Structure probing data (DMS and 2A3) for a 177-nucleotide construct. For DMS the reverse transcriptase was MarathonRT. 2A3 adducts were read by reverse transcription with SuperScript II with manganese. For 2A3, 8,326 sequencing reads were counted. Reactivities are rounded to 0.1 and cut off at 0 and 3.
[RMDB]
RNA sequence: GGGAACGACUCGAGUAGAGUCGAAAAGAUAUGGACGCAGUUGUCAGGGUACGGUCACCUAAGACAGCUCAUCGGAAACGAUGAGUCGAGGUGGCUGCGUACCCUUGGAUUUACUGCGUCCUAAGUCCUAAAUAAUCAGGUUCGCCUGAUUAUUUAGAAAAGAAACAACAACAACAAC
Reactivity to DMS in 0.01 (KOAc 150mM, MgCl2 10mM, bicine 150mM(pH8.5), 24C), signal-to-noise 9, nucleotides 027 to 126: g010a100u010a260u010g010g010a020c000g020c010a010g010u000u000g010u000c010a040g000g010g020u000a010c010g010g010u000c000a010c000c000u010a290a140g010a100c300a130g000c010u000c000a000u000c010g010g000a160a120a170c000g020a000u000g000a010g000u000c030g010a010g020g020u000g010g010c010u000g010c110g030u000a010c000c000c000u000u000g010g010a030u000u010u000a020c000u000g010c000g000u000c000c000u000a010a080g010u000c030
Reactivity to 2A3 in 0.01 (KOAc 150mM, MgCl2 10mM, bicine 150mM(pH8.5), 24C), signal-to-noise 2, nucleotides 027 to 126: g060a030u130a060u210g000g000a010c010g000c000a020g000u030u010g030u060c020a020g010g020g000u000a000c020g000g030u010c010a010c000c020u060a120a040g090a070c020a000g040c000u000c020a000u010c020g040g030a100a070a060c020g000a000u010g000a000g010u060c020g000a000g000g000u000g000g010c010u060g070c020g010u000a000c000c000c000u000u030g010g000a010u110u130u130a010c000u010g000c000g000u000c000c000u000a010a010g010u000c010